Structure probing data (DMS and 2A3) for a 177-nucleotide construct. It was measured as part of the RMDB library TTRDES. 2A3 adducts were read by reverse transcription with SuperScript II with manganese. The reactions ran in a buffer of 150 mM KOAc, 10 mM MgCl2 and 150 mM bicine (pH 8.5), at 24 C. For 2A3, 2,588 sequencing reads were counted.
RNA sequence: GGGAACGACUCGAGUAGAGUCGAAAAGAUAUGGAAUACACUCGCGAUAAGCUGAUAUCGGAAACGAUAUACAGCUUUUGACGCGAGGGUAUUCCUAAGUCAAAGCUGAGUUGUUCGCAACUCAGCAGUUUUACUGUCCGUUCGCGGACAGUAAAACAAAAGAAACAACAACAACAAC
Reactivity to DMS in 0.01 (KOAc 150mM, MgCl2 10mM, bicine 150mM(pH8.5), 24C), signal-to-noise 2, nucleotides 027 to 126: g010a030u000a120u020g020g000a000a010u000a010c000a040c000u000c000g040c000g040a110u020a020a010g030c010u000g020a020u000a000u000c020g010g000a020a030a070c000g000a000u000a000u000a180c010a020g000c000u000u000u000u000g020a150c110g020c000g010a020g000g000g030u000a000u000u000c000c000u000a010a070g000u000c020a110a170a140g000c010u010g010a000g000u000u000g010u000u010c270g030c020a000a010c000u000c000a000g010c000a020
Reactivity to 2A3 in 0.01 (KOAc 150mM, MgCl2 10mM, bicine 150mM(pH8.5), 24C), signal-to-noise 1, nucleotides 027 to 126: g000a000u000a000u090g000g010a020a010u010a010c020a000c030u010c010g010c030g130a220u050a300a000g000c000u030g000a000u010a010u000c020g020g020a050a010a000c010g010a000u030a010u100a140c020a000g000c000u000u000u010u060g190a050c010g000c000g000a000g000g010g000u020a000u010u010c000c000u000a010a000g000u010c110a220a090a040g000c000u000g000a000g000u070u020g020u090u170c300g020c170a010a010c010u000c000a010g000c010a000